[RMDB]
RNA sequence: GGGAACGACUCGAGUAGAGUCGAAAAGCUCGGAGACGAGCAAGGCUGACAAAACAAUGUCCCAACCUCCACGUGGUGUCGGCUGGAUAAUGCUGCAUUAUGUUGCAUUUAUCAACUGGGAAUCAAAAUCAGCUCAUACCUUCGGGUAUGAGCUGAUAAAAGAAACAACAACAACAAC
Reactivity to 2A3 in 0.01 (KOAc 150mM, MgCl2 10mM, bicine 150mM(pH8.5), 24C), signal-to-noise 2, nucleotides 027 to 126: g000c000u000c000g010g030a180g010a070c020g000a000g010c000a000a030g050g000c000u010g010a000c020a000a070a000a000c060a000a130u060g030u010c010c000c000a010a020c010c020u010c040c050a110c180g040u100g050g000u000g000u020c000g020g000c020u000g020g000a000u010a010a010u000g000c000u080g020c000a080u160u080a160u300g040u030u010g030c040a010u090u050u120a000u000c000a020a000c050u040g050g010g000a100a020u110c080a060a030a030
This 177-nucleotide RNA was probed chemically with 2A3.
Source: RMDB library OK1LIB, as collected in RNAgym.
The reactions ran in a buffer of 150 mM KOAc, 10 mM MgCl2 and 150 mM bicine (pH 8.5), at 24 C.